Record summary
Structure probing data (2A3) for a 207-nucleotide construct. The reactions ran in a buffer of 150 mM KOAc, 10 mM MgCl2 and 150 mM bicine (pH 8.5), at 24 C. It was measured as part of the RMDB library M2RFPK. Reactivities are given for positions 27 through 156.
RNA sequence: GGGAACGACUCGAGUAGAGUCGAAAAUGCACUAUUGUGUUAUUAGUAACUAAGUAAGCUUACAAUCGAAAAUGUUUAACCAUAAAAGGGUAAAAUGGUGUAAGACAGUCUGAUACUAACUGACAAAAAAACCCCUGGUCCUUCGGGACCAGGGGAACAUUCUGAUUUACUUCGGUAAAUCAGAAUGAAAAGAAACAACAACAACAAC
Reactivity to 2A3 in 0.01 (KOAc 150mM, MgCl2 10mM, bicine 150mM(pH8.5), 24C), signal-to-noise 2, nucleotides 027 to 156: u120g000c050a040c140u190a150u230u300g050u010g000u050u040a050u000u040a000g000u000a060a100c140u020a110a000g060u020a060a070g150c020u020u010a030c060a110a190u140c120g070a020a140a040a070u050g050u020u160u030a040a010c050c000a030u190a300a180a050a010g090g000g000u050a060a050a020a000u050g000g000u000g010u030a020a010g050a010c020a000g090u050c000u030g030a060u030a040c000u020a060a010c050u080g020a000c030a010a210a000a000a030a130a210c000c000c020c000u000g010g000u030c000c000u070u050c200g040g000g010a000c000c000a000g000g000g000g000a000a000